[RMDB]
Chemical mapping of a 207-nucleotide RNA with 2A3.
RNA sequence: GGGAACGACUCGAGUAGAGUCGAAAAGUUGAUGCAAAGGCACUUCGCAAUGUGUGCUCAAACAUUGCUUAUUCAAACACGCUUCACAAUGUGCGACAAAGAAACAUUGUUAUAAGAGCUAAUGUUUACCACGCCUAAAGGUUCGCCUUUAGGCGAACAGUCGUUACGCGUUCGCGCGUAACGACUGAAAAGAAACAACAACAACAAC
Reactivity to 2A3 in 0.01 (KOAc 150mM, MgCl2 10mM, bicine 150mM(pH8.5), 24C), signal-to-noise 2, nucleotides 027 to 156: g080u150u100g020a020u050g100c020a060a000a030g070g000c010a000c000u120u140c100g020c110a080a100u080g010u000g020u050g010c070u030c010a030a030a000c000a000u000u000g010c000u010u160a160u100u090c150a000a090a120c090a000c040g010c010u050u050c040a000c000a010a000u000g000u020g000c030g050a120c180a050a120a010g080a040a040a000c000a000u000u000g080u070u140a180u070a140a080g010a020g020c050u070a100a090u110g000u000u000u010a120c030c060a050c000g000c000c000u010a000a000a000g040g000u050u110c180g130c010c000u010u000u000a000g020g000c000g020a000a020
Reactivities are rounded to 0.1 and cut off at 0 and 3. The reactions ran in a buffer of 150 mM KOAc, 10 mM MgCl2 and 150 mM bicine (pH 8.5), at 24 C.